[RMDB]
Background: The record gives the reactivity of an RNA of 177 nucleotides to DMS. The reactions ran in a buffer of 150 mM KOAc, 10 mM MgCl2 and 150 mM bicine (pH 8.5), at 24 C. Reactivities are given for positions 27 through 126. Source: RMDB library TTRDEL, as collected in RNAgym. The DMS profile rests on 1,536 reads.

RNA sequence: GGGAACGACUCGAGUAGAGUCGAAAAGAUAUGGAUCCCUAGGGAGCGUGUGUCGGAAACGACACGCUUUGAUCUAGUGGAUCCUAAGUCAAAGACGGACGAAAUUCUUCGGAAUUUCGUCCGUCAAUCAGAUCUACGAGUUCGCUCGUAGAUCUGAAAAAGAAACAACAACAACAAC
Reactivity to DMS in 0.01 (KOAc 150mM, MgCl2 10mM, bicine 150mM(pH8.5), 24C), signal-to-noise 2, nucleotides 027 to 126: g000a030u010a300u020g010g000a000u000c010c000c000u010a020g010g000g010a150g000c190g010u000g000u010g010u010c040g020g000a070a090a210c000g010a060c000a020c000g010c000u000u010u000g010a130u020c010u000a000g020u010g020g000a010u010c010c000u000a000a060g010u000c020a060a100a220g000a000c010g000g000a040c000g000a010a000a010u000u000c000u000u010c240g010g000a020a000u000u000u000c000g010u000c000c000g010u000c000a020a060